This 177-nucleotide RNA was probed chemically with DMS. The DMS profile rests on 1,386 reads.
RNA sequence: GGGAACGACUCGAGUAGAGUCGAAAAUGGACAUGGAAGGGUACCGGAUCAGGUUCGAAGUACUGGACAGAGGUUCACACUGAUCUUGGAGUGAUUUCGACGGUUUUGGCGGUGGCUCAGCCCAUUAUGCUUUUAGGGGUUUCGACCCCUAAAAGCAAAAAGAAACAACAACAACAAC
Reactivity to DMS in 0.01 (KOAc 150mM, MgCl2 10mM, bicine 150mM(pH8.5), 24C), signal-to-noise 2, nucleotides 027 to 126: u000g010g010a080c070a060u030g000g010a120a100g000g010g000u010a060c080c090g010g020a080u010c030a070g030g010u000u000c060g010a110a060g000u000a080c140u000g000g000a090c090a110g010a110g010g010u000u000c080a080c160a150c020u030g000a050u000c080u000u010g020g000a070g010u020g020a130u010u000u000c040g020a060c130g000g010u000u000u000u000g030g000c070g020g060u000g020g010c050u010c050a140g030c020c000c030a090u010u030a060